[RMDB]
RNA sequence: GGGAACGACUCGAGUAGAGUCGAAAAUCUAACUGCUCCCCAAAAUAAGUUUGUUAUUUUUUUAAAAAAGGAGGAAGAAAAGAACUGAGCAUUAUUCUCUUUGACAAAAGGUAAAAUGACAAGGACUUCCUAUCAAUAUCUUCGGAUAUUGAUAGGAAAAAGAAACAACAACAACAAC
Reactivity to 2A3 in 0.01 (KOAc 150mM, MgCl2 10mM, bicine 150mM(pH8.5), 24C), signal-to-noise 1, nucleotides 027 to 126: u020c000u000a040a080c000u030g020c010u000c000c000c000c000a070a060a200a190u060a120a070g060u050u020u040g090u030u020a020u020u000u000u010u010u030u150a160a100a000a000a000a030g010g020a000g040g040a060a120g070a040a180a000a000g060a140a040c130u180g030a030g050c000a000u030u080a050u030u020c060u020c000u040u060u180g060a090c080a010a070a010a000g000g060u040a050a020a010a010u020g010a020c020a000a070g040g030a030c000u010

Chemical mapping of a 177-nucleotide RNA with 2A3. Values cover nucleotides 27 to 126. For 2A3, 485 sequencing reads were counted. The RNA was probed in 150 mM KOAc, 10 mM MgCl2 and 150 mM bicine (pH 8.5) at 24 C.